An RNA of 177 nucleotides, treated with 2A3 and DMS and read out base by base.
It was measured as part of the RMDB library OK2TST.
High 2A3 reactivity points to a flexible backbone, as in loops and unpaired stretches.
The reactions ran in a buffer of 150 mM KOAc, 10 mM MgCl2 and 150 mM bicine (pH 8.5), at 24 C.
The DMS profile rests on 873 reads.
Values cover nucleotides 27 to 126.
[RMDB]
RNA sequence: GGGAACGACUCGAGUAGAGUCGAAAAAGACUAUUGAGAACAGAUUCGGUGUAAUUCGAUAGUUCAUUUAAGAAAUCAUCACUGAACUUAACAUAUCGUUCAACUUCUGGUUUAGUUGAACAAGACCUAUUGACCUGCAUUUCGAUGCAGGUCAAUAAAAAGAAACAACAACAACAAC
Reactivity to 2A3 in 0.01 (KOAc 150mM, MgCl2 10mM, bicine 150mM(pH8.5), 24C), signal-to-noise 1, nucleotides 027 to 126: a000g030a000c020u030a030u000u110g020a030g020a160a010c030a050g200a300u070u090c030g120g010u070g030u080a110a110u010u010c020g000a000u010a020g030u000u060c030a090u110u100u180a170a020g060a030a030a000u110c070a010u000c020a000c050u020g000a070a080c010u060u030a090a030c020a070u200a050u190c060g000u060u000c010a000a010c010u100u060c060u150g300g030u270u200u100a020g000u010u010g000a000a020c010a000a000g020a000c000c000
Reactivity to DMS in 0.01 (KOAc 150mM, MgCl2 10mM, bicine 150mM(pH8.5), 24C), signal-to-noise 2, nucleotides 027 to 126: a130g050a080c010u000a070u000u000g010a050g000a160a050c130a080g020a120u010u010c070g010g020u010g010u000a140a090u010u000c060g030a060u000a030g010u000u030c070a110u000u000u010a020a160g010a090a070a020u000c050a120u000c170a060c100u010g000a020a020c170u010u010a110a080c250a080u030a100u000c140g000u000u000c010a010a000c010u010u010c180u000g020g000u000u000u000a000g000u000u000g020a030a030c030a060a030g020a100c150c070